[RMDB]
RNA sequence: GGGAACGACUCGAGUAGAGUCGAAAAGCAACACUUAUCGGAAAUGUUUUGAACACUACGUAUUGCAACAAUCUUGCUGCCUCCAGUACUACUAUGACUUCUGGAGUUUAUUCUUCAACAGUCACUAAUACUGACUACGUUUCGACGUAGUCAGUAUAAAAGAAACAACAACAACAAC
Reactivity to DMS in 0.01 (KOAc 150mM, MgCl2 10mM, bicine 150mM(pH8.5), 24C), signal-to-noise 4, nucleotides 027 to 126: g020c030a040a080c070a100c110u010u000a090u000c060g010g000a090a200a110u000g000u000u020u020u000g030a090a060c040a040c040u000a200c040g010u010a090u000u020g000c100a070a040c130a060a080u000c090u000u000g020c030u000g030c070c020u000c080c060a050g010u000a090c110u000a090c150u010a080u010g000a020c030u010u000c120u000g020g000a030g000u000u000u010a150u020u010c010u000u000c010a020a080c140a030g000u000c010a070c170u010a070
Reactivity to 2A3 in 0.01 (KOAc 150mM, MgCl2 10mM, bicine 150mM(pH8.5), 24C), signal-to-noise 3, nucleotides 027 to 126: g000c010a010a040c030a010c120u150u150a080u130c030g080g000a030a060a120u020g030u030u100u150u230g110a110a030c020a010c040u100a040c090g060u090a050u080u110g000c020a030a030c000a080a160u010c020u030u070g000c000u020g000c010c010u010c010c030a020g020u020a050c010u010a030c010u040a030u240g030a060c010u050u000c040u090g020g000a030g000u000u060u030a110u070u040c010u020u000c010a040a020c000a050g010u040c040a010c130u120a060